This 177-nucleotide RNA was probed chemically with 2A3 and DMS. The RNA was probed in 150 mM KOAc, 10 mM MgCl2 and 150 mM bicine (pH 8.5) at 24 C.
RNA sequence: GGGAACGACUCGAGUAGAGUCGAAAAAGCUGCUCGAAAUCGCGCCAAAGGACCGGCGUAACGGGAGUGGCUAGCAGCGAGGGUUGCCACUCCAGCCGCGCUAUGUAGCAGCCAUAGCAGAUUUACAGAUUAUAGUAGCAUUCGUGCUACUAUAAUCAAAAGAAACAACAACAACAAC
Reactivity to 2A3 in 0.01 (KOAc 150mM, MgCl2 10mM, bicine 150mM(pH8.5), 24C), signal-to-noise 9, nucleotides 027 to 126: a000g000c000u010g000c020u040c070g080a080a110a130u160c070g020c010g020c030c020a120a110a060g160g040a070c050c050g000g000c020g020u050a080a040c100g080g010g000a000g000u010g010g000c020u030a040g040c060a010g050c020g130a130g070g130g010u060u050g000c000c000a000c000u000c000c000a000g020c010c020g060c010g000c010u000a010u040g020u030a020g000c010a000g000c010c000a010u030a010g010c040a010g030a160u220u210u150a090c060a030
Reactivity to DMS in 0.01 (KOAc 150mM, MgCl2 10mM, bicine 150mM(pH8.5), 24C), signal-to-noise 9, nucleotides 027 to 126: a090g000c000u000g010c000u000c140g010a070a120a090u010c120g020c110g020c020c040a060a100a160g010g000a110c170c070g010g010c010g020u010a060a070c210g010g010g010a020g030u000g000g010c010u010a030g020c050a070g020c110g010a070g010g010g010u010u000g010c000c010a010c000u000c010c010a090g000c050c080g010c160g010c000u000a020u000g010u000a040g010c030a010g000c050c010a020u000a030g010c030a200g000a110u010u000u000a110c240a130